This 177-nucleotide RNA was probed chemically with 2A3 and DMS.
RNA sequence: GGGAACGACUCGAGUAGAGUCGAAAAGCACGUCGUUACGACGACGUGCAAGAAAACAAAAGGAGGGGUGAUGCCGGACCCCAAUGAAUCAAACCGGCAAAAAGCAUGGUGGUACGCCACCAUGCAAUCCAUAUAUGGGGUUCGCCCCAUAUAUGGAAAAAGAAACAACAACAACAAC
Reactivity to 2A3 in 0.01 (KOAc 150mM, MgCl2 10mM, bicine 150mM(pH8.5), 24C), signal-to-noise 5, nucleotides 027 to 126: g000c000a000c010g000u000c010g010u020u090a090c300g020a010c000g000a000c000g050u000g000c000a000a010g000a000a060a000a020c170a010a080a060a020g150g060a170g020g020g000g000u040g050a130u070g010c000c010g040g000a070c000c000c000c020a020a100u090g030a010a010u120c090a060a020a060c000c000g000g010c010a030a020a000a000a040g010c000a000u010g010g000u010g000g020u030a030c200g060c030c000a000c000c000a000u000g000c000a000a000
Reactivity to DMS in 0.01 (KOAc 150mM, MgCl2 10mM, bicine 150mM(pH8.5), 24C), signal-to-noise 2, nucleotides 027 to 126: g020c020a010c050g010u030c010g040u010u000a150c150g040a060c010g000a000c000g040u000g000c000a020a060g000a120a090a080a090c210a090a110a100a160g000g010a150g000g000g000g050u030g010a100u010g010c070c000g000g000a070c000c010c010c010a060a050u020g010a040a080u020c110a030a020a080c020c000g010g040c030a000a030a050a080a080g000c000a010u000g000g060u000g030g000u000a090c260g010c000c000a010c000c010a000u000g010c010a010a030
Background: For DMS the reverse transcriptase was MarathonRT.